[RMDB]
The record gives the reactivity of an RNA of 177 nucleotides to 2A3 and DMS.
RNA sequence: GGGAACGACUCGAGUAGAGUCGAAAACGGGGUACGAUGGAUAGUAAUAAUACUCCGGAGAUACAGUCCCGUACCCAUAGACUACGUCUGAGAUGUUCCGGAGUAUUAUUCUCGGAUACGUGGUCAAGGUACUCGUUGAUUUCGAUCAGCGAGUACCAAAAGAAACAACAACAACAAC
Reactivity to 2A3 in 0.01 (KOAc 150mM, MgCl2 10mM, bicine 150mM(pH8.5), 24C), signal-to-noise 8, nucleotides 027 to 126: c020g010g000g000g000u010a000c000g020a100u110g000g010a020u020a080g140u100a040a090u070a100a010u010a050c000u000c000c000g000g000a070g010a020u190a020c040a010g020u000c000c000c000g000u010a010c000c000c000a010u050a010g000a000c000u000a000c010g010u000c000u000g000a020g010a060u070g060u190u030c000c000g000g000a000g000u000a010u030u060a010u030u020c000u000c000g010g000a030u020a090c010g000u010g000g000u010c020a020a040
Reactivity to DMS in 0.01 (KOAc 150mM, MgCl2 10mM, bicine 150mM(pH8.5), 24C), signal-to-noise 5, nucleotides 027 to 126: c090g000g000g020g030u000a010c020g020a130u070g010g010a040u020a090g020u010a090a090u010a060a030u010a020c000u000c000c000g010g000a210g020a140u030a090c130a240g000u000c000c010c000g000u000a020c000c010c000a070u040a070g000a000c000u000a010c000g010u010c000u000g020a040g000a040u010g000u000u010c000c000g000g000a020g000u020a020u010u020a050u020u010c010u000c010g000g000a090u020a010c010g000u010g010g010u000c010a140a070
The 2A3 profile rests on 23,670 reads. For 2A3 the reverse transcriptase was SuperScript II with manganese. Source: RMDB library OK1LIB, as collected in RNAgym. DMS adducts were read by reverse transcription with MarathonRT. For DMS, 14,973 sequencing reads were counted.